[RMDB]
This 177-nucleotide RNA was probed chemically with DMS and 2A3. For DMS the reverse transcriptase was MarathonRT. Reactivities are rounded to 0.1 and cut off at 0 and 3. Source: RMDB libraries RFM100 and RFMREP, as collected in RNAgym. Conditions: 150 mM KOAc, 10 mM MgCl2 and 150 mM bicine (pH 8.5), 24 C.
RNA sequence: GGGAACGACUCGAGUAGAGUCGAAAACGUUUCCUUCCUUAACACUAUCGACUCCAUAAUGACCCAUCAGUCAAACGGUAUAUCUCAAACGACUACGGUUUACUCCAAAUUCAUUGGCUAGUUGAGGAAACUAUCCGAUAUUCGUAUCGGAUAGUUUAAAAGAAACAACAACAACAAC
Reactivity to DMS in 0.01 (KOAc 150mM, MgCl2 10mM, bicine 150mM(pH8.5), 24C), signal-to-noise 9, nucleotides 027 to 126: c100g010u000u010u000c000c010u000u000c010c010u000u010a040a060c090a110c080u010a090u010c050g010a070c050u010c020c050a090u010a050a060u010g000a090c050c010c020a110u010c100a050g020u010c080a050a040a080c070g000g000u000a040u010a080u010c020u000c070a060a070a100c120g000a050c130u000a040c060g000g010u010u000u000a060c050u000c050c050a050a080a090u010u000c060a070u000u000g010g010c100u010a060g010u000u000g020a060g010g000
Reactivity to 2A3 in 0.01 (KOAc 150mM, MgCl2 10mM, bicine 150mM(pH8.5), 24C), signal-to-noise 9, nucleotides 027 to 126: c020g010u010u020u020c000c000u010u080c020c000u070u080a090a010c020a020c080u070a070u140c040g060a040c030u030c020c010a070u070a190a100u220g050a070c000c010c010a070u080c030a020g050u050c020a040a050a040c030g010g040u050a070u030a060u090c040u010c080a150a130a050c060g040a030c020u040a020c050g070g000u010u050u050a040c030u020c020c020a020a050a110u140u120c070a070u050u070g030g010c020u040a040g010u020u020g020a030g050g000